[RMDB]
RNA sequence: GGGAACGACUCGAGUAGAGUCGAAAACAGCAGACCAUUUUGUAAUAACUUCAGGCGCUUGGAGCCAUUACUGGAACUCACAAUUACAACUCGACAUUCCAGUCGAACCUGUGCAAGGUCAGAUGCAGACGAUUAAUUUAUUCGUAAAUUAAUCGUCAAAAGAAACAACAACAACAAC
Reactivity to DMS in 0.01 (KOAc 150mM, MgCl2 10mM, bicine 150mM(pH8.5), 24C), signal-to-noise 6, nucleotides 027 to 126: c100a070g010c050a040g010a110c030c020a130u000u000u000u010g000u000a040a030u010a080a100c080u000u000c050a050g010g020c150g030c120u000u010g020g010a040g030c010c070a050u000u010a040c090u000g020g010a050a080c110u000c040a030c130a060a070u000u000a100c180a070a070c140u000c010g020a030c090a140u000u000c110c070a080g000u010c020g010a040a120c050c030u010g010u000g010c100a040a050g010g010u000c090a070g010a150u000g000c110a120
Reactivity to 2A3 in 0.01 (KOAc 150mM, MgCl2 10mM, bicine 150mM(pH8.5), 24C), signal-to-noise 5, nucleotides 027 to 126: c030a010g050c020a010g020a050c020c000a060u110u090u110u120g050u030a060a110u040a160a070c030u060u080c050a050g100g010c060g040c190u150u170g060g030a010g010c000c020a060u050u100a030c050u050g050g050a110a070c010u040c040a070c030a040a100u150u140a070c030a100a070c060u010c020g010a000c010a020u190u000c050c010a010g000u010c010g010a020a020c010c010u040g030u060g070c050a050a040g020g010u000c020a020g040a150u070g040c010a010